[RMDB]
RNA sequence: GGGAACGACUCGAGUAGAGUCGAAAAUGACUUCGGUGGUGACAUCAUGGGGAUGGAGGAGUUCUCGUCGGAGGAGCUGGACCAGUACAUCGUUCAGACCAUUGCUAGUGUGACUGCAUCGCAACCGACGUCUAGAUGUCUUCGGACAUCUAGACGUAAAAGAAACAACAACAACAAC
Reactivity to DMS in 0.01 (KOAc 150mM, MgCl2 10mM, bicine 150mM(pH8.5), 24C), signal-to-noise 2, nucleotides 027 to 126: u000g020a030c080u010u000c090g010g060u000g000g010u000g000a070c100a080u010c070a090u010g020g010g030g000a090u020g000g020a110g040g050a140g000u000u000c040u000c060g020u000c070g020g010a120g010g000a100g040c020u000g010g010a070c010c070a090g000u010a100c150a050u000c170g000u000u010c040a070g010a070c030c020a140u010u000g000c030u010a070g000u000g000u010g010a060c110u000g010c060a050u020c110g010c040a030a090c030c040g010
Reactivity to 2A3 in 0.01 (KOAc 150mM, MgCl2 10mM, bicine 150mM(pH8.5), 24C), signal-to-noise 1, nucleotides 027 to 126: u090g040a000c020u040u040c090g090g020u030g040g060u040g020a000c020a060u120c020a100u050g010g000g000g060a040u080g000g000a020g030g000a000g000u050u020c050u000c040g040u100c030g060g050a150g000g010a020g020c020u040g020g010a000c000c020a000g030u070a020c040a120u000c080g000u010u090c020a010g020a030c020c010a040u020u050g110c040u060a100g030u040g050u010g110a110c030u060g000c000a040u070c060g000c040a000a040c040c000g020